Structure probing data (DMS and 2A3) for a 177-nucleotide construct. Conditions: 150 mM KOAc, 10 mM MgCl2 and 150 mM bicine (pH 8.5), 24 C. For 2A3, 1,982 sequencing reads were counted. For DMS the reverse transcriptase was MarathonRT. For DMS, 977 sequencing reads were counted. It was measured as part of the RMDB library OK1LIB.
[RMDB]
RNA sequence: GGGAACGACUCGAGUAGAGUCGAAAAGAUGGGAGGCAACUGUGCUAUCCCCAUCACGGUCAUGGAGUACACCGAAUGCUCCUACAACAAGUCUCUGGGGGCCUGUCCCAUCCGAACGCAGCCCCGCUGUCGUCGCUAAAUUCGUUUAGCGACGACAAAAAGAAACAACAACAACAAC
Reactivity to DMS in 0.01 (KOAc 150mM, MgCl2 10mM, bicine 150mM(pH8.5), 24C), signal-to-noise 1, nucleotides 027 to 126: g000a000u000g000g000g050a000g000g000c020a080a240c230u000g000u030g080c020u000a040u030c000c030c000c020a020u070c050a300c040g000g000u060c250a010u000g020g000a030g020u000a060c180a020c090c080g000a140a300u010g000c040u030c040c000u020a030c150a100a080c090a120a250g000u050c000u000c000u000g050g000g040g070g000c000c170u000g000u000c080c030c160a040u000c060c070g000a010a010c170g000c010a080g100c090c000c000c040g000c090
Reactivity to 2A3 in 0.01 (KOAc 150mM, MgCl2 10mM, bicine 150mM(pH8.5), 24C), signal-to-noise 2, nucleotides 027 to 126: g000a000u000g000g020g010a020g030g000c020a080a110c270u210g050u080g240c000u090a200u180c040c000c000c000a000u000c000a010c040g050g000u070c070a120u070g010g040a010g010u040a020c070a080c140c040g070a090a030u070g000c010u000c010c000u000a050c000a120a020c010a100a040g100u040c010u010c030u160g000g000g040g000g060c030c030u050g040u040c000c020c010a070u100c030c010g060a040a010c040g020c070a000g000c020c000c000c000g020c010